[RMDB]
RNA sequence: GGGAACGACUCGAGUAGAGUCGAAAACGACCACCUGACGGGUCGGACAUAGCGUCAGGAUCAUCCGUGUCAGUCACCACGGUAAUCAUGUGGCUGAUGAUGGUUUUCCAUCUUAAUCUGACUGAGUCGUAGCAGUCUACAGUACUAUGACAUUAGAGAUACUAUACCAUUUCGAUGGUAUAGUAUCAAAAGAAACAACAACAACAAC
Reactivity to DMS in 0.01 (KOAc 150mM, MgCl2 10mM, bicine 150mM(pH8.5), 24C), signal-to-noise 3, nucleotides 027 to 156: c040g000a050c000c000a110c030c000u000g000a050c000g030g030g010u000c010g030g010a130c150a100u000a110g020c010g040u010c000a030g010g000a080u010c030a020u000c010c060g030u010g020u000c000a040g010u000c000a040c090c020a030c070g000g020u000a070a090u000c150a110u000g010u000g010g000c000u000g000a040u000g020a060u000g010g000u000u010u020u010c020c010a060u010c040u000u000a080a160u010c100u010g020a160c050u010g000a150g020u000c010g040u000a050g030c000a080g000u000c080u000a110c180a120g010u000a050c010u000a020u000g010a020c020a200u010u010a090g020a270
Reactivity to 2A3 in 0.01 (KOAc 150mM, MgCl2 10mM, bicine 150mM(pH8.5), 24C), signal-to-noise 9, nucleotides 027 to 156: c010g000a000c000c000a010c000c000u000g010a000c000g000g010g010u010c030g060g050a070c090a110u170a040g050c000g010u000c000a000g000g000a010u070c020a010u010c000c010g000u000g040u030c010a000g010u010c000a000c000c000a000c010g020g050u060a030a040u080c070a030u070g010u000g010g000c010u000g010a010u070g010a000u000g000g080u070u160u190u130c000c000a000u000c000u020u100a140a120u110c130u120g000a000c000u000g000a000g010u000c010g000u000a000g000c000a000g010u000c120u100a080c060a050g040u030a060c000u010a010u020g000a000c010a010u020u190a060g030a000